[RMDB]
RNA sequence: GGGAACGACUCGAGUAGAGUCGAAAAGCUGUCAGCUUCGGCUGACAGCAAACGCUCAUCUCAUGGAGCGCAAGACGAAUAGCUACAUAUUCGACAUGAGUAAAAGCUGCGCGUUCGCGCGCAGCAACGAUAUAUCUGCCUUCGGGCAGAUAUAUCGAAAAGAAACAACAACAACAAC
Reactivity to DMS in 0.01 (KOAc 150mM, MgCl2 10mM, bicine 150mM(pH8.5), 24C), signal-to-noise 1, nucleotides 027 to 126: g020c000u000g000u010c010a010g010c000u000u010c160g090g010c000u000g000a010c000a000g020c000a010a030a110c010g010c000u000c000a070u020c010u000c000a000u000g000g030a030g000c000g010c130a060a070g010a060c020g020a040a000u000a030g000c230u000a100c160a080u000a000u000u000c010g010a100c010a000u000g000a000g010u030a020a110a090a140g000c030u000g000c010g020c000g000u000u000c230g000c010g030c000g010c000a000g010c000a000a040
Reactivity to 2A3 in 0.01 (KOAc 150mM, MgCl2 10mM, bicine 150mM(pH8.5), 24C), signal-to-noise 2, nucleotides 027 to 126: g000c000u000g010u020c000a020g010c020u070u130c210g080g000c000u000g000a000c000a000g010c010a000a000a000c010g010c000u010c010a090u070c040u000c000a000u010g000g000a000g000c040g000c200a140a020g100a030c000g020a000a000u030a010g060c070u170a080c090a200u050a030u020u020c000g000a010c010a010u020g000a000g010u080a020a040a040a010g000c000u000g000c010g010c030g030u040u080c220g010c000g030c000g000c070a000g010c000a000a000